[RMDB]
RNA sequence: GGGAACGACUCGAGUAGAGUCGAAAAUCCCAAAGGUUCCGGAAUCCGAAAGGUACGGAGGAACCGCUUUUUGGGGUUAAUCUGCAGUGAAGCUGCAGUAGGGAUACCUUCUGUCCCGCACCCGACAGCUAACUCCGGAUGGAAUAAAGGAAGGAGACCCUAUUAUAUCCUUCGGGAUAUAAUAGGGAAAAGAAACAACAACAACAAC
Reactivity to 2A3 in 0.01 (KOAc 150mM, MgCl2 10mM, bicine 150mM(pH8.5), 24C), signal-to-noise 1, nucleotides 027 to 156: u010c010c000c000a030a030a010g010g000u030u000c000c000g060g120a110a170u030c040c010g080a150a040a020g050g030u060a030c040g030g000a000g000g000a050a030c030c020g000c040u160u170u020u080u150g030g000g010g000u010u020a020a070u070c000u000g020c000a000g000u070g150a140a030g160c010u000g000c010a000g010u020a000g020g000g010a000u030a040c010c010u020u050c040u090g000u030c000c000c010g020c000a030c010c000c000g050a080c070a070g000c000u060a050a050c030u010c030c020g040g120a090u170g080g010a060a000u140a150a110a030g000g000a030a000g020g000a050g030a020
Reactivity to DMS in 0.01 (KOAc 150mM, MgCl2 10mM, bicine 150mM(pH8.5), 24C), signal-to-noise 2, nucleotides 027 to 156: u010c010c010c000a050a080a070g000g030u000u000c020c000g020g030a220a150u010c030c000g010a100a120a130g010g000u000a080c050g040g020a170g010g010a080a090c080c040g000c060u000u000u010u010u000g010g010g000g020u000u000a110a130u000c000u010g020c010a030g010u010g000a170a190g020c010u010g020c000a030g000u000a080g010g000g010a060u000a050c020c070u000u000c070u010g000u000c110c010c020g000c120a060c020c000c020g000a100c070a040g020c050u000a140a170c010u000c000c010g000g040a080u020g020g000a070a130u000a060a090a110g000g000a040a040g010g040a300g000a160